[RMDB]
RNA sequence: GGGAACGACUCGAGUAGAGUCGAAAACCAACGGACGACAAUUGCCGAGGCGGCUCUGAUACCAUUUGUCACGGGCCUAGCCCUUCGGCCACCACACUUGGCCCAUGCGGCGCUCCCAUGCAGGGAGCCAGCCUUAUCAACCGAGGCAACGACUGGUGGUGAAAUCUAUGUUCGCAUAGAUUUCACCAAAAGAAACAACAACAACAAC
Reactivity to 2A3 in 0.01 (KOAc 150mM, MgCl2 10mM, bicine 150mM(pH8.5), 24C), signal-to-noise 1, nucleotides 027 to 156: c000c010a020a050c060g050g050a040c040g000a000c070a200a240u190u120g010c000c000g090a060g000g040c050g000g030c000u000c030u030g040a030u020a150c130c090a280u270u300u260g030u030c060a060c170g000g010g040c000c020u020a070g010c000c000c050u110u090c080g000g000c020c000a000c010c010a010c000a000c050u080u120g040g000c000c030c090a060u220g040c030g020g020c040g060c030u000c060c000c010a110u300g160c080a130g040g030g000a000g000c000c000a000g050c000c030u040u080a080u100c160a080a040c000c120g100a060g040g090c010a110a000c010g110a060c060u150g060g000u010

Conditions: 150 mM KOAc, 10 mM MgCl2 and 150 mM bicine (pH 8.5), 24 C.
Chemical mapping of a 207-nucleotide RNA with 2A3.
For 2A3 the reverse transcriptase was SuperScript II with manganese.
Reactivities are given for positions 27 through 156.